Source: RMDB libraries RFM100 and RFMREP, as collected in RNAgym. The record gives the reactivity of an RNA of 177 nucleotides to 2A3 and DMS. DMS adducts were read by reverse transcription with MarathonRT. DMS (dimethyl sulfate) methylates the pairing face of unpaired adenines and cytosines. Reactivities are given for positions 27 through 126.
RNA sequence: GGGAACGACUCGAGUAGAGUCGAAAAGUUAACUCUUCCGUAGUAAUGUGAAUAUGUAACUCUUUUUGUGUGCUUUUCAUAGGUGCCUGAUGAUUAAUCUCUGUUUGUUGGGUGCGGCCCAUUAAAUCCGUUAGAGUAUAUUCGUAUACUCUAACGGAAAAGAAACAACAACAACAAC
Reactivity to 2A3 in 0.01 (KOAc 150mM, MgCl2 10mM, bicine 150mM(pH8.5), 24C), signal-to-noise 8, nucleotides 027 to 126: g000u060u060a080a070c020u010c000u100u010c010c040g060u090a070g050u060a050a210u080g040u030g120a060a030u130a060u210g070u080a110a090c010u030c050u040u110u060u190u140g080u020g010u030g020c010u010u050u010u030c050a070u080a120g110g030u060g050c010c030u040g040a060u030g010a030u110u150a140a140u070c030u000c030u050g120u080u110u030g070u040u080g020g000g020u040g020c020g030g070c020c000c000a010u090u110a040a040a070u010
Reactivity to DMS in 0.01 (KOAc 150mM, MgCl2 10mM, bicine 150mM(pH8.5), 24C), signal-to-noise 4, nucleotides 027 to 126: g030u000u000a050a070c070u010c040u000u020c040c050g000u010a130g010u000a070a050u000g020u010g020a060a030u040a030u020g010u000a080a070c030u000c040u000u010u010u010u010g020u010g000u010g020c030u000u000u000u000c020a070u010a070g000g020u000g010c010c010u000g010a040u010g010a060u010u000a080a080u000c060u000c050u000g000u000u000u020g010u000u000g010g010g020u010g010c080g010g010c010c030c020a090u020u000a050a070a110u010

The reactions ran in a buffer of 150 mM KOAc, 10 mM MgCl2 and 150 mM bicine (pH 8.5), at 24 C.